[RMDB]
RNA sequence: GGGAACGACUCGAGUAGAGUCGAAAAGAUAUGGACGAUCUCCGAUAAGCCUGUCUCGGAAACGAGAUAAGGCUUUUGACGGAGCAGAGUCCUAAGUCAAAGUUUCCCCGCUUCGGCGGGGAAACAAGUAUAUUCGUCAGUUCGCUGACGAAUAUACAAAAGAAACAACAACAACAAC
Reactivity to 2A3 in 0.01 (KOAc 150mM, MgCl2 10mM, bicine 150mM(pH8.5), 24C), signal-to-noise 1, nucleotides 027 to 126: g020a020u090a020u100g000g010a010c010g010a050u020c000u010c010c000g080a130u110a230a010g030c000c000u000g020u030c000u000c010g000g050a080a030a050c010g000a000g010a000u050a140a070g000g000c000u010u000u000u010g000a000c000g000g020a020g040c150a040g060a030g050u000c000c000u000a030a010g020u020c040a180a000a060g000u000u000u010c010c010c000c000g020c020u090u090c190g190g030c050g060g020g000g000a000a000a000c000a000a000
Reactivity to DMS in 0.01 (KOAc 150mM, MgCl2 10mM, bicine 150mM(pH8.5), 24C), signal-to-noise 4, nucleotides 027 to 126: g020a050u000a200u010g000g000a020c000g020a300u000c010u000c000c010g010a200u000a020a020g010c000c000u000g000u000c000u010c000g000g000a050a050a100c000g010a010g000a010u000a040a020g020g010c010u000u000u000u000g000a240c050g000g000a020g000c160a060g000a300g000u000c000c000u010a040a110g000u000c040a080a140a120g000u000u000u000c000c000c000c000g010c000u000u010c240g010g030c000g030g010g000g000a000a000a000c000a010a100
Structure probing data (2A3 and DMS) for a 177-nucleotide construct. The RNA was probed in 150 mM KOAc, 10 mM MgCl2 and 150 mM bicine (pH 8.5) at 24 C. DMS adducts were read by reverse transcription with MarathonRT. The data come from the RNA Mapping Database (RMDB), library TTRDEL.